[RMDB]
RNA sequence: GGGAACGACUCGAGUAGAGUCGAAAAAUAGGUGGGAGACUGAGAAGCCUGGACGCCAGUCUAGGUGGAGUCGCCGUUGGGAUACCACCCUUGUCGUACUGAGAUUCUAACCCGCACCCCUGAUCGGGGGCGGAGAGAAUUUCGAUUCUCUCCGCCCAAAAGAAACAACAACAACAAC
Reactivity to DMS in 0.01 (KOAc 150mM, MgCl2 10mM, bicine 150mM(pH8.5), 24C), signal-to-noise 1, nucleotides 027 to 126: a070u010a060g000g000u000g010g000g010a080g000a020c040u020g000a180g010a300a300g000c010c000u020g010g020a000c000g020c050c070a130g020u000c000u000a020g010g010u010g020g000a030g030u000c000g020c220c300g000u000u000g010g010g000a190u010a070c030c020a040c000c010c070u010u010g030u000c010g020u000a050c090u020g000a040g000a090u020u010c030u020a100a140c030c000c010g040c090a230c010c010c000c030u000g000a150u000c080g010g010